Structure probing data (DMS and 2A3) for a 177-nucleotide construct.
RNA sequence: GGGAACGACUCGAGUAGAGUCGAAAAUCCACGUCCUUCGGGACGUGGAAAAUACGGCACGGGAGCCGAAGAAAACCCGAAGCGCAGUGCAGCGCAGCACAAAAAGGUGAGUCUUCGGACUCACCAACAACAAAAAUAACUUCGGUUAUUUUUGUUGAAAAGAAACAACAACAACAAC
Reactivity to DMS in 0.01 (KOAc 150mM, MgCl2 10mM, bicine 150mM(pH8.5), 24C), signal-to-noise 4, nucleotides 027 to 126: u000c000c000a010c000g020u000c000c000u000u000c210g030g020g010a020c000g050u000g000g000a000a000a050a070u000a190c020g020g020c020a070c040g030g000g010a190g020c000c010g010a080a060g000a080a030a080a080c010c000c000g000a140a160g020c040g030c040a130g010u000g020c100a110g010c010g020c050a090g000c110a060c120a040a080a060a100a100g000g000u000g000a010g010u000c010u000u020c190g000g000a010c000u000c010a000c000c000a030a060
Reactivity to 2A3 in 0.01 (KOAc 150mM, MgCl2 10mM, bicine 150mM(pH8.5), 24C), signal-to-noise 3, nucleotides 027 to 126: u000c000c000a000c010g000u000c000c010u040u110c190g090g000g000a000c010g010u020g000g000a000a000a000a000u080a010c000g000g000c040a000c050g010g000g060a060g030c030c050g060a080a050g080a020a050a000a020c000c010c000g010a140a050g030c030g010c080a080g080u100g120c060a060g030c050g000c080a020g050c060a050c050a030a110a010a020a010g010g000u000g000a000g000u000c010u040u110c220g070g010a000c000u010c000a000c000c000a000a000
Reactivities are given for positions 27 through 126.
The DMS profile rests on 3,753 reads.
For 2A3 the reverse transcriptase was SuperScript II with manganese.